The data come from the RNA Mapping Database (RMDB), library OK2TST. Chemical mapping of a 177-nucleotide RNA with DMS and 2A3. For DMS the reverse transcriptase was MarathonRT. Values cover nucleotides 27 to 126.
[RMDB]
RNA sequence: GGGAACGACUCGAGUAGAGUCGAAAACGUCUCGUUUUUCGAGUAACACGGUACUGAUAAUUUGUUUUUCAGGAACAGGAGUGGCUUGUUCAUUUGAGACAGGUUUUGUAGCACAACCGACAAGAGAGUCCAGCAGUAUAUUCGUAUACUGCUGGACAAAAGAAACAACAACAACAAC
Reactivity to DMS in 0.01 (KOAc 150mM, MgCl2 10mM, bicine 150mM(pH8.5), 24C), signal-to-noise 3, nucleotides 027 to 126: c120g010u010c010u010c000g020u010u010u000u000u000c020g000a030g010u000a070a110c100a070c050g000g010u000a060c020u000g010a030u010a030a060u000u010u020g010u010u000u000u000u000c010a010g010g000a080a020c010a060g010g030a300g020u000g010g000c020u010u000g000u000u010c060a050u010u010u010g010a050g000a010c060a050g020g020u000u000u000u000g020u000a040g000c100a120c130a080a060c030c040g010a090c170a080a130g000a080g000a110
Reactivity to 2A3 in 0.01 (KOAc 150mM, MgCl2 10mM, bicine 150mM(pH8.5), 24C), signal-to-noise 1, nucleotides 027 to 126: c040g000u020c010u020c020g020u020u030u010u050u110c020g040a020g000u060a070a050c040a000c040g030g040u050a020c010u020g060a040u020a190a030u040u090u110g210u040u100u000u020u000c020a020g020g010a050a010c000a020g040g040a070g090u090g000g070c000u010u030g050u030u070c020a010u050u090u190g020a030g000a000c050a050g000g050u020u100u000u070g100u090a030g000c030a020c030a140a000c000c020g050a040c040a090a000g170a000g030a010